[RMDB]
RNA sequence: GGGAACGACUCGAGUAGAGUCGAAAAGCCACGCUAUUCGUAGCGUGGCGGUUAAGAUCUAGACAAAAACUGACAAAUAGUCUAGAUCAAAUAAAGUCAGAACGGUCCGGGAUUUCGAUCCCGGAAACUACCAUCAAAAUUUCGAUUUUGAUGGUAGAAAAGAAACAACAACAACAAC
Reactivity to 2A3 in 0.01 (KOAc 150mM, MgCl2 10mM, bicine 150mM(pH8.5), 24C), signal-to-noise 3, nucleotides 027 to 126: g000c010c000a000c010g000c000u010a040u070u090c230g070u030a010g000c000g000u000g010g000c000g000g000u060u030a080a010g000a000u000c000u010a000g000a000c040a020a250a030a120a120c050u100g030a000c050a010a180a100u080a060g000u000c010u010a000g000a000u000c000a000a000a000u050a010a030a000g020u010c020a000g020a170a080c070g090g020u020c000c000g040g000g000a020u060u120u160c190g030a010u010c000c000c010g000g000a000a000a000
Reactivity to DMS in 0.01 (KOAc 150mM, MgCl2 10mM, bicine 150mM(pH8.5), 24C), signal-to-noise 4, nucleotides 027 to 126: g010c000c000a000c000g010c000u000a020u000u000c120g020u000a010g000c010g020u000g010g010c010g000g000u000u000a110a120g000a020u000c000u000a010g000a000c000a090a100a070a130a120c060u010g000a040c090a150a120a070u000a120g010u000c000u000a000g000a010u000c010a010a070a060u010a060a110a130g000u000c030a020g010a170a140c230g010g010u000c000c010g010g000g000a030u000u000u000c200g010a040u010c000c000c000g000g000a000a020a080